[RMDB]
RNA sequence: GGGAACGACUCGAGUAGAGUCGAAAAUGUAUGAUCGUGAAAAGAUUUUCAAAUCAUUUCAUAAGUGUCUUACUUAAGACGAUAAGCCAUAGCAACGCUACUUAUCGCUAUGUGAUUUUUGCGUCGGCAUAUACGUCAUCUUCGGAUGACGUAUAUGAAAAGAAACAACAACAACAAC
Reactivity to DMS in 0.01 (KOAc 150mM, MgCl2 10mM, bicine 150mM(pH8.5), 24C), signal-to-noise 8, nucleotides 027 to 126: u040g010u000a010u000g010a010u000c050g010u000g000a010a010a030a030g010a030u000u000u050u060c230a090a080a010u010c000a060u000u000u000c000a010u010a060a110g020u020g000u000c010u010u000a020c030u010u020a080a070g000a030c010g000a050u010a020a020g000c100c050a110u010a020g030c030a070a100c240g010c090u020a060c110u020u010a060u010c120g000c030u000a050u010g000u020g000a080u000u000u000u000u000g020c150g010u000c000g000g000
Reactivity to 2A3 in 0.01 (KOAc 150mM, MgCl2 10mM, bicine 150mM(pH8.5), 24C), signal-to-noise 9, nucleotides 027 to 126: u140g010u010a020u050g000a010u030c050g030u030g030a010a010a010a050g060a030u030u070u110u110c090a080a140a010u000c020a030u010u040u010c020a020u040a180a110g060u090g050u210c010u040u030a050c000u120u150a130a070g030a030c010g030a030u020a050a010g010c020c030a020u020a020g010c030a080a110c110g070c130u140a110c060u210u180a100u210c060g000c010u010a040u050g120u100g170a290u040u050u040u090u180g060c030g010u010c000g010g000